[RMDB]
RNA sequence: GGGAACGACUCGAGUAGAGUCGAAAAGUGAACGAUCUCGGUUGUUUCUCUGAAGGCAUGAUCACCCCGUCCGAUGCGGAAGUUCGUGCUUCCGUCGAACGCGAACGUCGGACGGCGGCCAUGAGUCAAUAUGUUUAAGGCUUCGGCCUUAAACAAACUAAAACUAAAUAUUCGUAUUUAGUUUUAGAAAAGAAACAACAACAACAAC
Reactivity to 2A3 in 0.01 (KOAc 150mM, MgCl2 10mM, bicine 150mM(pH8.5), 24C), signal-to-noise 3, nucleotides 027 to 156: g170u140g070a120a040c040g020a060u050c040u050c120g020g000u010u000g000u010u030u000c040u000c050u040g080a160a060g120g010c010a010u000g000a020u100c040a030c000c000c000c000g000u000c000c000g000a010u050g020c030g030g060a040a020g020u120u220c120g100u260g070c030u070u030c030c030g080u050c090g030a080a030c080g010c030g060a060a020c030g000u000c000g000g010a000c000g010g000c000g000g000c030c000a000u010g020a000g050u050c020a050a080u050a050u220g010u000u000u000a000a000g000g000c000u020u070c280g080g000c000c000u000u000a010a000a000c000a000a000a010
Reactivity to DMS in 0.01 (KOAc 150mM, MgCl2 10mM, bicine 150mM(pH8.5), 24C), signal-to-noise 2, nucleotides 027 to 156: g000u000g000a050a100c020g010a070u000c000u000c000g010g010u000u000g020u000u000u000c010u000c010u030g020a090a120g020g010c040a030u000g000a100u000c150a080c040c000c010c000g030u010c020c030g000a040u000g010c060g030g090a130a060g010u000u000c050g040u020g020c120u010u020c140c130g030u010c050g020a030a060c010g000c070g020a130a090c040g020u010c000g010g000a030c010g000g010c020g040g000c070c030a030u010g000a100g000u010c070a090a140u010a130u010g010u010u010u000a000a020g010g010c020u000u010c300g050g020c000c010u000u000a000a010a010c000a020a050a130

An RNA of 207 nucleotides, treated with 2A3 and DMS and read out base by base.
DMS adducts were read by reverse transcription with MarathonRT.
2A3 adducts were read by reverse transcription with SuperScript II with manganese.
Values cover nucleotides 27 to 156.
It was measured as part of the RMDB library M2RFPK.